[RMDB]
RNA sequence: GGGAACGACUCGAGUAGAGUCGAAAACGGUCGCCGCCGCGGCGGGAGCCGGCAUUGACGCGCGAGCGCUGGCGGCCGCGCGGAUGCCGGCGGGCGAUGCCGGAGCAGCGGCGCCAGCCGGCGCGUAGGCAUCACUGCCUUUCGAGGCAGUGAUGCCAAAAGAAACAACAACAACAAC
Reactivity to 2A3 in 0.01 (KOAc 150mM, MgCl2 10mM, bicine 150mM(pH8.5), 24C), signal-to-noise 2, nucleotides 027 to 126: c030g030g050u090c080g050c100c000g030c030c020g100c150g110g040c030g000g030g020a030g090c040c000g050g000c070a140u040u200g080a020c000g000c020g040c010g050a110g090c160g020c080u030g030g030c060g200g150c000c000g040c020g000c040g110g050a050u170g020c000c010g000g010c030g000g040g020c070g080a070u230g000c010c000g000g030a100g150c050a010g000c000g000g000c000g010c000c000a000g000c010c010g000g040c020g000c010g000u020a040
Reactivity to DMS in 0.01 (KOAc 150mM, MgCl2 10mM, bicine 150mM(pH8.5), 24C), signal-to-noise 2, nucleotides 027 to 126: c050g040g010u000c030g000c040c010g000c040c030g020c210g040g000c020g020g030g000a150g010c020c000g020g010c150a120u020u000g000a060c000g000c000g000c010g030a110g030c190g030c010u000g000g020c030g020g010c000c000g020c010g010c110g010g000a080u020g000c000c000g010g000c000g000g000g010c170g000a110u010g010c000c000g000g010a080g030c020a110g010c010g010g010c010g000c070c000a030g010c010c010g000g010c000g010c050g010u000a020

Structure probing data (2A3 and DMS) for a 177-nucleotide construct. It was measured as part of the RMDB library OK2TRN.